The record gives the reactivity of an RNA of 207 nucleotides to DMS and 2A3. The RNA was probed in 150 mM KOAc, 10 mM MgCl2 and 150 mM bicine (pH 8.5) at 24 C. DMS adducts were read by reverse transcription with MarathonRT. For DMS, 4,836 sequencing reads were counted.
RNA sequence: GGGAACGACUCGAGUAGAGUCGAAAAGCUCCCACGUGAGUGGGAGCAUACCAUGUGAAUGGUAGAGCUCUGCAAUUCUCGUUCAGGGAGGAAAACCCGUAGAGCACUCUACUCCGUUAGAUCGAGAGAUCGAGGAGUAGUGUGAAUGAACAGAAUGACUAGACUUGAUGUUCGCAUCAAGUCUAGUAAAAGAAACAACAACAACAAC
Reactivity to DMS in 0.01 (KOAc 150mM, MgCl2 10mM, bicine 150mM(pH8.5), 24C), signal-to-noise 3, nucleotides 027 to 156: g030c010u000c000c000c000a060c030g020u000g010a240g070u000g010g040g020a010g020c010a010u000a000c000c000a060u000g000u000g010a200a010u000g010g040u000a030g000a130g020c020u010c020u010g020c020a100a130u000u030c040u010c020g020u000u000c040a170g010g000g000a120g010g000a040a040a080a110c000c000c020g010u010a070g000a210g040c010a010c030u010c000u000a010c000u000c000c000g000u000u000a230g000a030u020c010g030a300g000a300g030a030u000c010g000a190g020g010a030g000u000a000g020u000g000u000g000a080a110u000g010a070a110c010a120g010a130a030u000g020
Reactivity to 2A3 in 0.01 (KOAc 150mM, MgCl2 10mM, bicine 150mM(pH8.5), 24C), signal-to-noise 2, nucleotides 027 to 156: g010c010u000c000c000c000a000c010g050u080g080a080g010u000g010g000g000a000g000c000a010u000a000c000c000a020u040g090u060g160a160a000u010g000g000u030a050g020a030g030c010u010c010u030g010c010a030a060u000u000c020u000c010g000u040u000c030a040g000g020g000a030g010g070a010a000a030a020c000c000c000g000u020a030g010a000g020c000a010c000u000c000u000a000c000u000c000c000g050u060u080a030g000a000u000c010g010a000g000a000g000a080u010c010g000a040g000g000a000g000u000a000g000u010g000u000g030a040a050u060g000a000a010c030a030g020a030a020u090g020
Source information:
For 2A3 the reverse transcriptase was SuperScript II with manganese.